[RMDB]
RNA sequence: GGGAACGACUCGAGUAGAGUCGAAAAUGCCGGGAGUCAGUUAUGUCUUGCAGGCAGGGUGCUUCUUCGCUAUCGGCUUCUUUAUUUUUGGCCCUCAGAUGCUGAUUGGUAUGGCAGCCGCUGAAUGCCUUUACACGAUAUUCGUAUCGUGUAAAGGAAAAGAAACAACAACAACAAC
Reactivity to 2A3 in 0.01 (KOAc 150mM, MgCl2 10mM, bicine 150mM(pH8.5), 24C), signal-to-noise 4, nucleotides 027 to 126: u100g030c000c000g000g040g010a030g010u060c060a010g010u100u160a110u180g060u030c040u070u100g060c050a040g040g000c020a030g030g010g030u020g010c000u050u040c000u070u050c030g010c040u060a070u090c020g100g010c000u120u000c030u090u300u140a300u150u200u050u110u170g150g010c040c000c000u040c030a040g010a050u040g000c010u000g020a110u080u110g030g000u090a040u050g020g000c010a020g020c000c010g020c010u010g030a080a050u090g050
Reactivity to DMS in 0.01 (KOAc 150mM, MgCl2 10mM, bicine 150mM(pH8.5), 24C), signal-to-noise 5, nucleotides 027 to 126: u010g010c040c030g000g010g010a070g010u010c040a090g020u010u010a080u010g020u010c030u000u000g010c110a090g000g010c040a060g000g020g030u000g010c030u000u000c030u000u000c120g000c060u000a120u000c070g010g000c040u000u000c040u010u000u010a080u010u000u000u000u000g000g000c030c020c040u000c090a060g010a060u000g010c020u000g000a070u000u010g020g010u000a070u000g000g010c030a040g000c020c050g010c050u000g010a080a090u010g010

About this RNA: This 177-nucleotide RNA was probed chemically with 2A3 and DMS. For DMS the reverse transcriptase was MarathonRT. Reactivities are given for positions 27 through 126.